Structure probing data (DMS and 2A3) for a 207-nucleotide construct. 2A3 adducts were read by reverse transcription with SuperScript II with manganese. Values cover nucleotides 27 to 156. The RNA was probed in 150 mM KOAc, 10 mM MgCl2 and 150 mM bicine (pH 8.5) at 24 C. For 2A3, 3,318 sequencing reads were counted.
RNA sequence: GGGAACGACUCGAGUAGAGUCGAAAAGCUGGUGGCUCGCUCUCAAUAAUGGAUAUUGGGUUUCAUCAAGAGUGCAAAAUGGUGGCAAUUCACUAUUAGUGGUUAUUAAUUUUGUUUGCGUGGCUUGGCCUUGUCUACAGGUUAUCUUCGGAUGGCUCUAGGAAUGAUAGUUCGCUAUCAUUCCUAGAAAAGAAACAACAACAACAAC
Reactivity to DMS in 0.01 (KOAc 150mM, MgCl2 10mM, bicine 150mM(pH8.5), 24C), signal-to-noise 2, nucleotides 027 to 156: g010c040u000g000g040u000g020g000c020u000c050g040c010u010c010u000c020a040a070u000a050a110u000g020g010a130u000a080u000u010g030g020g000u000u000u000c030a070u000c060a060a220g010a090g020u000g010c050a040a080a050a060u010g020g010u000g010g000c010a070a070u010u000c030a040c070u000a090u000u000a120g050u000g020g020u000u000a050u010u010a050a070u000u010u000u000g020u010u000u010g010c040g010u000g000g000c030u000u000g020g040c020c020u000u000g000u010c020u000a070c080a050g010g010u000u000a040u000c040u000u010c070g010g000a080u000g000g010c050u000
Reactivity to 2A3 in 0.01 (KOAc 150mM, MgCl2 10mM, bicine 150mM(pH8.5), 24C), signal-to-noise 5, nucleotides 027 to 156: g020c040u040g000g020u030g030g020c020u020c030g040c020u020c010u010c000a060a090u170a110a080u120g120g020a060u060a070u160u110g040g020g020u050u060u080c050a090u020c030a050a070g030a020g060u060g050c050a020a030a040a070u050g020g020u010g010g020c020a010a060u120u120c030a040c050u060a050u210u060a070g020u020g100g020u040u060a050u090u120a090a100u040u110u040u090g060u030u060u080g020c030g030u030g040g000c010u010u050g000g010c000c010u030u050g010u010c000u020a030c010a020g000g050u050u050a030u050c030u060u040c050g060g010a040u030g040g000c020u000
The DMS profile rests on 5,442 reads.